Structure probing data (DMS and 2A3) for a 177-nucleotide construct.
It was measured as part of the RMDB library OK1LIB.
Conditions: 150 mM KOAc, 10 mM MgCl2 and 150 mM bicine (pH 8.5), 24 C.
RNA sequence: GGGAACGACUCGAGUAGAGUCGAAAAAGGCACCCGUAUCGGCCUGGUUCAGCCGUUCCCGUUCGGCGGAGCUGGAAAGGCUCUGUGCUAUGCUAUCCAGGUUUACCGUACUGGUUUGUACCGUGUCUCACUGAUUCACCUUCGGGUGAAUCAGUGAAAAAGAAACAACAACAACAAC
Reactivity to DMS in 0.01 (KOAc 150mM, MgCl2 10mM, bicine 150mM(pH8.5), 24C), signal-to-noise 1, nucleotides 027 to 126: a040g040g000c050a050c020c020c010g000u010a090u040c090g030g000c040c010u000g000g020u000u010c100a040g030c060c020g000u020u020c000c030c000g000u030u000c220g010g000c050g000g000a020g000c000u000g030g020a050a150a150g010g000c000u000c000u010g000u000g030c080u020a050u030g040c020u000a040u000c000c000a000g000g000u040u040u080a130c090c050g010u000a050c030u000g000g000u000u010u000g010u020a030c090c040g000u010g000u020c110
Reactivity to 2A3 in 0.01 (KOAc 150mM, MgCl2 10mM, bicine 150mM(pH8.5), 24C), signal-to-noise 3, nucleotides 027 to 126: a000g060g000c030a020c000c000c010g010u030a050u150c010g010g020c010c020u020g000g030u180u130c090a000g020c010c010g000u010u000c010c000c000g010u130u080c040g030g030c010g020g000a010g000c000u040g050g170a190a180a100g050g000c020u000c020u010g030u020g020c040u090a110u300g000c000u020a010u030c000c010a000g010g040u060u100u070a080c030c010g090u050a070c050u090g100g010u060u080u180g050u030a040c020c060g040u030g030u030c020